[RMDB]
RNA sequence: GGGAACGACUCGAGUAGAGUCGAAAAGCUUAUUCUCAGGGCGGGGCGAAAUUCCCCACCGGCGGUAAAUCAACUCAGUUGAAAGCCGCGAGCGCUUUGGGUGCGAACUCAAAGGACAGCAGAUCCGAUUUCUUAUAACAUUCGUGUUAUAAGAAAUAAAAGAAACAACAACAACAAC
Reactivity to 2A3 in 0.01 (KOAc 150mM, MgCl2 10mM, bicine 150mM(pH8.5), 24C), signal-to-noise 8, nucleotides 027 to 126: g010c010u090u090a070u250u030c020u010c020a010g050g040g010c120g010g010g010g000c010g020a050a030a060u130u050c010c000c000c000a000c000c000g020g000c010g000g020u070a100a120a180u030c010a000a010c050u080c300a120g010u010u000g020a030a030a020g010c000c010g000c020g010a020g000c010g000c000u020u010u010g020g010g000u050g030c050g050a050a010c000u000c000a010a000a000g010g020a040c010a030g010c010a010g020a050u040c020c030g020
Reactivity to DMS in 0.01 (KOAc 150mM, MgCl2 10mM, bicine 150mM(pH8.5), 24C), signal-to-noise 8, nucleotides 027 to 126: g010c080u020u020a080u010u010c020u000c010a120g000g000g010c100g010g010g000g000c070g000a080a080a130u030u010c000c000c000c010a030c020c010g020g010c000g000g000u000a010a130a190u000c020a010a010c000u040c170a140g010u000u000g000a020a120a300g000c010c000g000c010g000a070g010c100g000c010u000u000u010g000g000g000u000g000c220g000a140a020c010u000c000a010a010a020g000g000a110c040a030g010c050a060g010a080u020c060c080g000
The data come from the RNA Mapping Database (RMDB), libraries RFM100 and RFMREP. The record gives the reactivity of an RNA of 177 nucleotides to 2A3 and DMS. For 2A3 the reverse transcriptase was SuperScript II with manganese. The RNA was probed in 150 mM KOAc, 10 mM MgCl2 and 150 mM bicine (pH 8.5) at 24 C.